RNA sequence: GGGAACGACUCGAGUAGAGUCGAAAACCACAACCCAGAGGUUCUGAGGUGCAGCCAGAGUAUAGAACCUGUAAUCUAGGUAAUGGCUCUCACUGGAAAACAGCUGUGGCACUGGUAUAGGAGCAAUGAGGGGCUCACGCAGAACUCCCUGUGUGGACGCUCCUAGUCAGUUCGCUGACUAGGAGCGAAAAGAAACAACAACAACAAC
Reactivity to 2A3 in 0.01 (KOAc 150mM, MgCl2 10mM, bicine 150mM(pH8.5), 24C), signal-to-noise 1, nucleotides 027 to 156: c030c030a000c010a060a010c010c010c010a010g010a040g030g070u090u000c010u050g040a030g000g140u030g060c030a010g000c000c020a030g010a050g200u140a040u080a220g120a060a110c010c000u020g040u050a180a200u160c130u150a040g000g000u110a090a090u140g120g000c010u010c000u000c050a070c030u000g110g000a110a250a050a020c060a050g050c140u140g020u110g060g060c050a030c110u030g010g010u060a070u030a150g030g020a040g000c070a170a000u130g040a140g060g010g010g000c000u000c000a000c050g050c000a000g010a020a050c020u040c000c000c000u000g000u000g000u030g000g030a010
An RNA of 207 nucleotides, treated with 2A3 and read out base by base.
Conditions: 150 mM KOAc, 10 mM MgCl2 and 150 mM bicine (pH 8.5), 24 C.
The 2A3 profile rests on 575 reads.
For 2A3 the reverse transcriptase was SuperScript II with manganese.